Conditions: 150 mM KOAc, 10 mM MgCl2 and 150 mM bicine (pH 8.5), 24 C. The record gives the reactivity of an RNA of 177 nucleotides to DMS and 2A3. For DMS the reverse transcriptase was MarathonRT. The 2A3 profile rests on 1,393 reads. For DMS, 843 sequencing reads were counted. Source: RMDB library OK2TST, as collected in RNAgym.
[RMDB]
RNA sequence: GGGAACGACUCGAGUAGAGUCGAAAACAACGAGGACGAGCAGAUCGACAAGAUUGUCGAGAUGAUGCACGCGGCCAACGUCAAGGCCUUCGACAAGCACCGCCACGGCAUCCGCGACGCGCACGCCAUCUUCUCACAGCUUCGGCUGUGAGAAGAUAAAAGAAACAACAACAACAAC
Reactivity to DMS in 0.01 (KOAc 150mM, MgCl2 10mM, bicine 150mM(pH8.5), 24C), signal-to-noise 2, nucleotides 027 to 126: c150a080a210c140g040a190g000g000a020c030g010a160g050c020a080g000a160u000c000g020a010c000a100a160g000a190u000u000g010u020c010g010a010g000a130u000g000a150u000g000c000a090c120g010c190g040g000c090c070a010a070c120g000u000c080a120a140g030g000c020c070u000u000c070g000a050c230a040a080g000c040a090c040c010g000c050c080a040c090g030g020c020a070u000c030c070g000c100g000a060c120g000c050g000c030a030c060g010c140c140
Reactivity to 2A3 in 0.01 (KOAc 150mM, MgCl2 10mM, bicine 150mM(pH8.5), 24C), signal-to-noise 2, nucleotides 027 to 126: c010a060a030c030g050a060g060g000a040c030g000a000g030c030a000g020a110u020c010g110a010c010a030a070g260a300u140u180g040u020c000g000a010g000a080u110g010a020u030g000c060a030c090g050c000g000g000c020c020a030a020c050g070u090c080a070a090g030g020c000c030u060u090c030g060a030c020a060a030g000c010a010c050c020g030c020c000a060c020g000g040c000a000u000c000c020g010c050g040a030c050g030c000g000c030a030c030g040c070c000